Record summary: This 177-nucleotide RNA was probed chemically with 2A3 and DMS. For 2A3 the reverse transcriptase was SuperScript II with manganese. Source: RMDB libraries RFM100 and RFMREP, as collected in RNAgym. Reactivities are given for positions 27 through 126.

[RMDB]
RNA sequence: GGGAACGACUCGAGUAGAGUCGAAAACUCGGAGAUCAGCUUGCCGUCCUCGCUGUAGACCUUGAGGGGGAUCUGCAGCUGGACGUUACGCAGAGCUUCCACCGAGGGCAGGCUGGGACUCAGAUAGCCAUAAAUGUGGAUUCGUCCACAUUUAUGGAAAAGAAACAACAACAACAAC
Reactivity to 2A3 in 0.01 (KOAc 150mM, MgCl2 10mM, bicine 150mM(pH8.5), 24C), signal-to-noise 9, nucleotides 027 to 126: c010u010c020g040g010a040g010a060u090c040a010g010c000u010u010g010c010c010g040u010c000c010u040c110g000c000u000g000u010a010g010a020c000c010u050u090g120a300g070g110g000g010g070a210u010c000u000g000c000a000g000c000u000g000g000a000c000g010u040u050a040c060g000c050a030g010a010g150c010u060u010c020c030a120c010c040g020a060g000g010g010c020a010g020g000c010u020g010g020g050a070c010u010c030a020g040a200u170a060g060
Reactivity to DMS in 0.01 (KOAc 150mM, MgCl2 10mM, bicine 150mM(pH8.5), 24C), signal-to-noise 8, nucleotides 027 to 126: c030u000c020g000g000a100g000a120u010c060a030g000c010u000u000g010c020c020g010u000c000c040u000c260g000c000u000g010u000a010g000a020c010c010u000u010g010a180g040g010g000g000g010a070u000c000u000g000c000a010g010c010u000g000g010a010c020g000u010u010a040c180g000c070a090g010a050g010c020u000u000c040c030a130c090c070g000a060g000g010g000c060a040g000g010c030u010g010g000g000a100c040u010c030a090g010a100u020a080g010